[RMDB]
RNA sequence: GGGAACGACUCGAGUAGAGUCGAAAAGACAAAUGCAGCAUAUUAGGGUAAGCAGGAAAGGGACGGUAGCUCCUGGUGUCAGUUCAUACGGUGUGAUGCAUCUGCGUCGUGCACACAUGCACCCAAACAGAUCUGAACUUUUCGAAGUUCAGAUCUGAAAAGAAACAACAACAACAAC
Reactivity to DMS in 0.01 (KOAc 150mM, MgCl2 10mM, bicine 150mM(pH8.5), 24C), signal-to-noise 3, nucleotides 027 to 126: g010a050c090a030a070a070u000g020c020a050g010c040a040u000a080u000u000a050g000g000g010u010a040a080g010c030a050g000g000a060a080a070g000g000g010a070c040g000g010u000a070g010c040u000c040c020u000g000g010u000g010u000c040a050g000u000u000c090a070u010a060c120g010g010u010g010u000g000a110u000g000c020a040u000c040u010g000c120g020u000c110g000u010g000c030a030c060a040c080a040u000g000c130a080c000c020c040a050a090a180
Reactivity to 2A3 in 0.01 (KOAc 150mM, MgCl2 10mM, bicine 150mM(pH8.5), 24C), signal-to-noise 2, nucleotides 027 to 126: g050a030c030a010a110a020u090g000c010a000g000c020a020u060a090u180u190a080g080g000g000u050a050a020g030c020a010g030g100a010a050a030g000g010g020a020c060g040g000u030a010g010c010u030c020c010u040g000g050u050g020u060c040a030g030u020u050c040a030u080a160c110g010g000u040g020u020g020a140u020g000c010a020u020c030u090g060c000g070u150c040g030u050g000c000a000c000a000c000a040u070g020c020a070c010c020c000a010a040a010
Overview:
An RNA of 177 nucleotides, treated with DMS and 2A3 and read out base by base. The DMS profile rests on 3,562 reads. The 2A3 profile rests on 3,276 reads. Source: RMDB library M2PK90, as collected in RNAgym.